[RMDB]
RNA sequence: GGGAACGACUCGAGUAGAGUCGAAAAUCGGCUUCUUCGGAAGCCGAAAAAACCGUAGGCACGAUAAGGUGUAAGCGAAGAACUGCUUUCGAAAGAGAGCAGGGAGUACACCUUUUGACGUGCCUAAACGGAAAAAAUCACUACUUCGGUAGUGAAACACCAGUUACACCUUCGGGUGUAACUGGUGAAAAGAAACAACAACAACAAC
Reactivity to 2A3 in 0.01 (KOAc 150mM, MgCl2 10mM, bicine 150mM(pH8.5), 24C), signal-to-noise 1, nucleotides 027 to 156: u010c000g000g000c000u000u030c000u010u010c150g080g000a010a010g000c000c010g000a000a000a000a000a000a000c000c010g000u000a030g000g000c000a000c010g010a050u030a020a000g000g000u010g000u000a100a090g140c070g160a170a030g040a130a060c000u000g020c010u000u000u000c060g060a070a110a040g010a010g020a000g000c010a000g030g010g000a000g040u020a000c000a000c000c000u000u000u010u100g030a030c000g000u000g040c000c000u000a000a030a000c000g060g050a160a080a000a000a000a050u000c010a010c000u040a000c010u050u070c270g150g000u000a000g010u010g000a000a020a000
Structure probing data (2A3) for a 207-nucleotide construct.
For 2A3 the reverse transcriptase was SuperScript II with manganese.
It was measured as part of the RMDB library RNAMAK.